[RMDB]
RNA sequence: GGGAACGACUCGAGUAGAGUCGAAAACGACGUUCUGGAAGCCGGAAAUGUUGGCGCCGAUGUUGGCGAUGCCCGAUACGGUUCCGGGGCCGCCGUUGAAGAAGCCCGAGGACGGAUCGGUGGUGGCCUCAUGGUGGGCGUUCGCGCCCACCAUGAGAAAAGAAACAACAACAACAAC
Reactivity to 2A3 in 0.01 (KOAc 150mM, MgCl2 10mM, bicine 150mM(pH8.5), 24C), signal-to-noise 2, nucleotides 027 to 126: c040g010a000c000g000u000u140c050u010g000g020a020a000g140c030c050g000g110a050a130a070u130g030u180u160g030g000c000g030c000c000g140a290u080g120u190u300g050g020c000g080a190u070g050c040c020c000g000a040u090a030c060g040g010u040u080c000c010g000g010g040g000c060c000g020c000c000g040u070u050g040a080a000g110a050a000g000c040c000c000g010a060g000g090a000c010g020g030a020u060c010g010g010u010g000g040u050g040g040c040
Reactivity to DMS in 0.01 (KOAc 150mM, MgCl2 10mM, bicine 150mM(pH8.5), 24C), signal-to-noise 1, nucleotides 027 to 126: c000g020a080c040g000u000u000c000u000g000g040a060a170g040c030c010g000g000a040a020a050u030g040u030u040g000g020c000g000c000c000g010a140u030g010u030u040g000g060c020g000a100u020g030c010c000c030g000a110u000a140c100g000g020u010u000c000c000g000g020g010g000c080c060g020c010c000g000u000u000g000a070a140g020a300a070g000c060c000c030g000a210g040g000a080c090g000g020a050u020c050g020g000u000g000g000u000g000g000c060
This 177-nucleotide RNA was probed chemically with 2A3 and DMS. The RNA was probed in 150 mM KOAc, 10 mM MgCl2 and 150 mM bicine (pH 8.5) at 24 C. For DMS, 1,671 sequencing reads were counted. It was measured as part of the RMDB library OK1LIB. For DMS the reverse transcriptase was MarathonRT.